About this RNA
Source: RMDB library M2RFPK, as collected in RNAgym. Chemical mapping of a 207-nucleotide RNA with 2A3 and DMS. The RNA was probed in 150 mM KOAc, 10 mM MgCl2 and 150 mM bicine (pH 8.5) at 24 C.
[RMDB]
RNA sequence: GGGAACGACUCGAGUAGAGUCGAAAAGGGUGAGACCUAGGAACCGUGGGGGUAUUCUCAAAGGAAGCUUUUGCAGUGACGCCCAUGUAAGUGGGAUAUAACAACAGAACUCGUAUGAGUAGCCUAAUAAAUCGGACCUUCUUCGGAAGGUCCGAAACACUUUAGAUAAGUUCGCUUAUCUAAAGUGAAAAGAAACAACAACAACAAC
Reactivity to 2A3 in 0.01 (KOAc 150mM, MgCl2 10mM, bicine 150mM(pH8.5), 24C), signal-to-noise 2, nucleotides 027 to 156: g040g010g020u030g050a090g040a090c020c030u040a030g090g010a050a050c060c040g020u060g000g000g000g000g010u050a090u100u060c030u020c010a050a050a010g050g010a040a000g040c000u000u010u110u120g000c010a020g000u000g040a010c050g030c000c000c000a010u070g070u130a100a090g010u020g000g000g020a010u010a010u010a060a020c070a020a010c010a040g090a060a020c010u020c030g020u110a060u100g000a020g030u040a030g010c000c000u060a110a050u090a110a110a030u040c010g000g000a000c000c000u000u000c000u020u050c060g060g000a000a000g000g000u010c010c000g000a000a000a000
Reactivity to DMS in 0.01 (KOAc 150mM, MgCl2 10mM, bicine 150mM(pH8.5), 24C), signal-to-noise 1, nucleotides 027 to 156: g000g000g030u000g020a140g000a090c100c050u010a140g010g010a050a040c100c060g000u000g030g000g020g030g000u000a090u000u020c020u000c050a050a110a110g020g020a090a070g020c060u000u000u000u000g000c040a100g020u010g010a210c130g000c000c010c010a050u010g000u000a050a090g020u000g010g020g000a040u000a090u020a100a090c030a070a110c050a070g010a070a050c030u000c040g010u000a140u020g000a040g000u000a100g010c030c030u010a080a090u010a020a100a140u000c020g000g010a030c000c000u030u030c010u010u010c300g000g010a090a010g030g030u020c000c000g010a010a020a080
DMS adducts were read by reverse transcription with MarathonRT.